[RMDB]
RNA sequence: GGGAACGACUCGAGUAGAGUCGAAAAGGGGAUGCUGACAGUCACCUCUCCUGUCAUACUGCUACCUCAGGUGGACAACAAGGCAUUAUGUUUACCAAAGAGAGCAAGCCUUCAAAAAAUAGAUCCUUGGUGCCUGAAACAAGCAGGCAUACUGGAACGACUCGAUUUUAUUCGUAAAAUCGAGUCGAAAAGAAACAACAACAACAAC
Reactivity to 2A3 in 0.01 (KOAc 150mM, MgCl2 10mM, bicine 150mM(pH8.5), 24C), signal-to-noise 3, nucleotides 027 to 156: g030g020g000g010a060u070g040c050u060g050a050c050a020g020u040c020a040c050c040u030c040u020c000c000u000g050u030c000a020u100a160c050u060g030c020u090a140c000c020u020c010a020g010g010u020g010g030a020c010a150a000c070a090a080g140g030c040a030u080u070a040u230g010u000u010u020a020c020c020a030a170a010g040a020g000a010g020c010a060a020g000c030c000u100u100c070a080a030a010a010a020a030u110a050g090a100u010c000c000u030u120g050g000u010g000c000c010u010g020a070a160a040c070a090a060g100c000a000g010g000c010a000u050a150c010u000g030g000a040a060
Reactivity to DMS in 0.01 (KOAc 150mM, MgCl2 10mM, bicine 150mM(pH8.5), 24C), signal-to-noise 1, nucleotides 027 to 156: g020g020g000g050a130u000g010c140u000g000a120c050a110g010u040c010a040c070c000u010c000u000c000c000u000g060u010c090a040u000a060c090u000g020c040u000a170c040c060u000c040a130g000g070u000g020g000a060c000a050a030c050a090a070g090g020c070a070u000u000a130u000g010u000u000u000a100c120c040a040a120a130g000a080g000a050g040c030a060a210g020c030c020u000u000c070a010a020a110a100a130a110u000a130g040a080u000c010c000u000u000g060g020u000g000c020c000u010g000a120a120a190c180a080a160g000c010a040g000g020c020a010u000a010c080u020g000g020a110a240